[RMDB]
RNA sequence: GGGAACGACUCGAGUAGAGUCGAAAACACGCCACCUGUACUGACAUCCUGAACAGUGACUGGAAGGAAGGGUGUGCCACCCCUGCUCUUGGGACGGAGGGGGGACUGUGCAUAGAGAGUCAGAGCAAUUUGCAUAUGUUUUCGAACAUAUGCAAAUAAAAGAAACAACAACAACAAC
Reactivity to DMS in 0.01 (KOAc 150mM, MgCl2 10mM, bicine 150mM(pH8.5), 24C), signal-to-noise 9, nucleotides 027 to 126: c100a100c160g010c040c020a090c010c010u000g010u000a170c030u000g000a170c050a280u000c020c020u000g000a150a130c100a050g010u010g000a080c130u000g010g010a230a060g000g000a100a110g000g000g010u000g020u000g010c010c080a140c020c000c000c010u000g010c010u000c010u000u010g010g000g010a090c120g000g000a040g010g000g000g000g000g000a070c090u000g010u000g020c040a070u000a080g000a100g000a080g010u000c030a040g010a180g000c140a090
Reactivity to 2A3 in 0.01 (KOAc 150mM, MgCl2 10mM, bicine 150mM(pH8.5), 24C), signal-to-noise 9, nucleotides 027 to 126: c050a010c040g060c020c010a030c010c030u140g080u220a060c010u020g020a010c010a040u010c010c010u080g060a210a070c050a110g060u080g230a110c150u040g010g030a030a010g030g020a030a030g040g010g000u040g050u080g010c000c000a030c010c000c000c000u070g230c000u040c020u050u130g120g050g070a060c060g020g010a020g000g020g010g000g000g000a020c090u090g030u080g030c010a040u110a030g060a000g010a000g050u040c030a010g010a020g040c020a040
Conditions: 150 mM KOAc, 10 mM MgCl2 and 150 mM bicine (pH 8.5), 24 C. The record gives the reactivity of an RNA of 177 nucleotides to DMS and 2A3. For DMS the reverse transcriptase was MarathonRT. Source: RMDB library OK2TST, as collected in RNAgym. Values cover nucleotides 27 to 126.